[RMDB]
RNA sequence: GGGAACGACUCGAGUAGAGUCGAAAAGUAAUAGAUAUUGGGAUGACGAGAAAGGGUGCGCUGAUAUCCCAGACGAAUGCUAGCAGUAAAUAGAAUAGCGCUCCUAAUACAACUAGCAACAAAAGGAUAAGGUAUCGUGAUGUCAAUCACAUUGCGACAGUAAUACGUAGUUCGCUACGUAUUACUGAAAAGAAACAACAACAACAAC
Reactivity to DMS in 0.01 (KOAc 150mM, MgCl2 10mM, bicine 150mM(pH8.5), 24C), signal-to-noise 5, nucleotides 027 to 156: g010u000a060a100u000a100g020a080u000a080u000u000g010g000g010a080u000g010a170c070g010a140g000a110a100a140g010g020g020u000g020c060g030c010u000g020a160u000a090u000c000c000c010a170g010a140c110g010a110a070u000g000c010u000a030g010c050a120g010u000a050a080a150u000a090g010a050a120u000a060g020c050g030c040u010c010c010u000a080a160u010a070c030a100a060c030u010a030g010c020a040a160c070a050a070a080a100g020g010a110u000a060a090g000g010u000a100u000c010g030u000g000a020u000g010u000c040a130a130u000c120a090c010a010u000u000g010c000g010a100
Reactivity to 2A3 in 0.01 (KOAc 150mM, MgCl2 10mM, bicine 150mM(pH8.5), 24C), signal-to-noise 8, nucleotides 027 to 156: g030u050a030a090u080a100g080a040u080a080u110u080g010g010g010a030u050g040a060c100g020a040g100a130a070a070g050g000g000u040g000c020g000c020u020g020a060u030a030u130c000c010c020a000g030a020c050g050a090a040u080g010c020u040a010g000c050a030g050u130a030a090a110u090a060g090a080a080u040a050g010c020g000c000u010c000c000u050a070a020u080a040c010a050a030c020u020a010g020c010a010a040c030a050a110a030a010g090g010a060u080a100a060g090g010u080a030u060c010g000u010g000a010u010g030u060c070a050a050u110c020a030c000a010u000u030g000c010g010a010